[RMDB]
RNA sequence: GGGAACGACUCGAGUAGAGUCGAAAAUGGGAUGGGCUGCAGGCGGCUCUGGAGUGGAAGCCAGACCCUGUGGAGGUCGGCAUGAUUGACAGCCAAGGGAGGGAGCGCAGCCUGGACAUAAUCUCAAUAAUGACUCCAAAUUCGUUUGGAGUCAUUAAAAAGAAACAACAACAACAAC
Reactivity to DMS in 0.01 (KOAc 150mM, MgCl2 10mM, bicine 150mM(pH8.5), 24C), signal-to-noise 3, nucleotides 027 to 126: u010g000g010g000a240u000g010g010g000c040u000g020c010a090g020g020c120g000g000c100u000c020u010g000g010a120g020u010g010g020a110a220g020c010c010a080g010a090c030c010c020u000g030u010g010g010a060g010g010u000c020g010g000c120a120u000g010a150u000u020g000a050c050a040g000c010c010a110a090g000g000g000a190g000g000g000a180g010c030g010c020a020g010c010c010u000g000g000a090c100a060u000a080a100u000c020u000c030a070a210
Reactivity to 2A3 in 0.01 (KOAc 150mM, MgCl2 10mM, bicine 150mM(pH8.5), 24C), signal-to-noise 2, nucleotides 027 to 126: u090g000g020g020a030u030g000g000g030c020u040g000c000a050g140g040c030g000g050c080u020c000u040g040g010a060g080u170g060g100a140a000g020c010c010a020g010a020c010c010c060u110g040u080g090g040a090g010g020u010c000g000g060c070a050u210g060a220u120u170g020a010c010a030g000c020c040a000a000g060g030g000a170g000g080g000a050g020c040g000c050a000g000c000c010u010g000g000a010c010a020u150a110a110u050c010u000c000a040a000